[RMDB]
RNA sequence: GGGAACGACUCGAGUAGAGUCGAAAAGAUAUGGAGCGCGCGACCCCUUCAACAGCGACUGCGCCCUAAUUAUAUCGGAAACGAUAUAAUUAGGGCGUGUCGACAUGAAGACGCCGCUCCUAAGUCAUCACACUUACAGGUUCGCCUGUAAGUGUGAAAAAGAAACAACAACAACAAC
Reactivity to DMS in 0.01 (KOAc 150mM, MgCl2 10mM, bicine 150mM(pH8.5), 24C), signal-to-noise 1, nucleotides 027 to 126: g000a050u000a300u000g000g000a040g000c000g000c300g030c000g040a180c250c190c300c000u000u030c000a030a110c300a080g000c030g000a000c060u020g070c020g020c000c000c000u000a010a030u000u000a000u000a000u000c000g000g000a050a100a160c000g000a010u000a000u000a010a030u000u010a000g000g000g000c000g010u000g000u000c000g000a130c060a110u040g000a030a000g060a230c050g010c010c000g000c040u010c040c000u030a000a080g000u000c060a120